[RMDB]
RNA sequence: GGGAACGACUCGAGUAGAGUCGAAAAUUAUAGGCAUGGAAAGUCAACUGGGGCCAGGCUUGGUCGUGCUGUAUAAAGAGACAUAUGGCAGGCAAGAGUGAGGCAGCCUCAGAGUCUGCUAAUGGCAUCCUCAGCAUUUAUUCGUAAAUGCUGAGGAAAAAGAAACAACAACAACAAC
Reactivity to 2A3 in 0.01 (KOAc 150mM, MgCl2 10mM, bicine 150mM(pH8.5), 24C), signal-to-noise 2, nucleotides 027 to 126: u070u020a030u130a080g000g010c020a010u050g030g050a130a040a090g060u030c070a060a090c080u010g020g000g000g020c020c010a020g060g060c020u060u070g140g030u130c030g050u040g000c000u030g060u010a070u060a100a120a060g210a010g010a030c030a080u080a020u090g010g020c000a000g050g000c060a130a050g070a010g100u070g030a060g060g030c060a020g070c010c000u000c010a020g000a010g030u030c000u040g020c020u030a090a020u030g020g000c010a040
Reactivity to DMS in 0.01 (KOAc 150mM, MgCl2 10mM, bicine 150mM(pH8.5), 24C), signal-to-noise 3, nucleotides 027 to 126: u000u000a080u010a080g000g010c010a030u000g000g010a110a080a070g000u000c040a060a140c050u000g020g010g000g000c120c070a120g010g010c000u010u010g010g020u000c010g020u000g020c010u000g010u000a050u000a040a080a120g020a200g000a060c120a040u000a040u010g000g010c000a040g000g000c010a080a130g000a090g000u010g010a120g030g000c080a100g010c080c010u000c020a030g000a220g010u010c040u000g000c030u000a050a030u000g010g000c070a170